Structure probing data (DMS and 2A3) for a 170-nucleotide construct.
Source: RMDB library 15KLIB, as collected in RNAgym.
For DMS the reverse transcriptase was MarathonRT.
For 2A3 the reverse transcriptase was SuperScript II with manganese.

[RMDB]
RNA sequence: GGGAACGACUCGAGUAGAGUCGAAAACUGGGCCUCUUCGCCGGGGGUCCUCCCUCUUCGUCCUUCUUCUUUCUCAACAUUCCGACGAUGUUUCCCAGCCAGGGGUUUUCAUCCUCAAGUUUCUUGACCCCACCGGUGUUCGCACCGGUGAAAAGAAACAACAACAACAAC
Reactivity to DMS in 0.01 (KOAc 150mM, MgCl2 10mM, bicine 150mM(pH8.5), 24C), signal-to-noise 3, nucleotides 027 to 129: c190u040g000g000g000c040c030u010c020u060u030c170g040c190c120g040g050g030g040g010u010c060c030u020c040c000c010u050c040u040u020c050g120u020c030c020u020u040c060u010u010c050u010u000u020c040u000c050a100a110c140a000u000u000c060c020g040a130c070g000a050u040g050u060u000u050c000c000c000a150g030c080c040a120g000g000g000g000u030u040u010u070c100a000u030c040c080u040c110a080a160g040u000u000u000c030u000u020g010a100c000c040c040
Reactivity to 2A3 in 0.01 (KOAc 150mM, MgCl2 10mM, bicine 150mM(pH8.5), 24C), signal-to-noise 5, nucleotides 027 to 129: c060u020g000g010g000c000c020u020c040u220u130c080g060c050c010g000g000g000g010g010u020c020c000u030c000c000c000u010c020u020u020c030g050u020c000c020u010u050c000u030u020c000u000u040u010c040u020c020a050a130c020a120u070u090c020c010g020a040c060g040a050u090g010u010u020u010c010c010c020a020g030c030c010a010g000g010g000g000u010u020u060u100c070a100u080c020c030u080c050a080a030g020u010u040u000c010u010u050g090a080c020c030c010